[RMDB]
RNA sequence: GGGAACGACUCGAGUAGAGUCGAAAAUGGAGCUUCACAUAGCCUAUCAUCGCUGGGAGCCUGCUCCCGUCGUACAGGUACCAGUAUACCCUCGCGGUGUCGAGGGCCGCGUGGCUGGGGGAUAGUACCCUCCGGGAGAAUUCGUUCUCCCGGAGGGAAAAGAAACAACAACAACAAC
Reactivity to 2A3 in 0.01 (KOAc 150mM, MgCl2 10mM, bicine 150mM(pH8.5), 24C), signal-to-noise 1, nucleotides 027 to 126: u100g020g020a120g000c020u070u090c100a010c040a250u100a040g000c000c000u080a060u140c010a010u070c040g030c060u000g020g020g030a100g150c040c000u010g070c050u070c000c000c040g220u300c040g000u060a140c060a040g100g000u010a020c000c010a040g000u020a070u140a070c060c020c020u000c040g000c050g040g260u210g030u290c030g030a100g000g060g050c030c010g000c070g000u020g050g000c040u010g030g030g020g000g000a040u090a090g070u090a070
Reactivity to DMS in 0.01 (KOAc 150mM, MgCl2 10mM, bicine 150mM(pH8.5), 24C), signal-to-noise 1, nucleotides 027 to 126: u030g000g010a140g000c060u010u000c090a110c070a090u000a070g070c010c020u020a110u000c140a080u010c090g000c030u010g010g000g000a110g000c040c040u000g000c080u010c020c030c040g000u000c130g030u020a110c120a040g000g000u000a210c000c030a000g000u020a110u010a210c060c010c000u000c000g020c040g020g000u000g000u000c020g010a050g000g000g020c050c030g060c140g000u000g040g020c080u000g010g000g030g030g000a160u010a070g010u020a210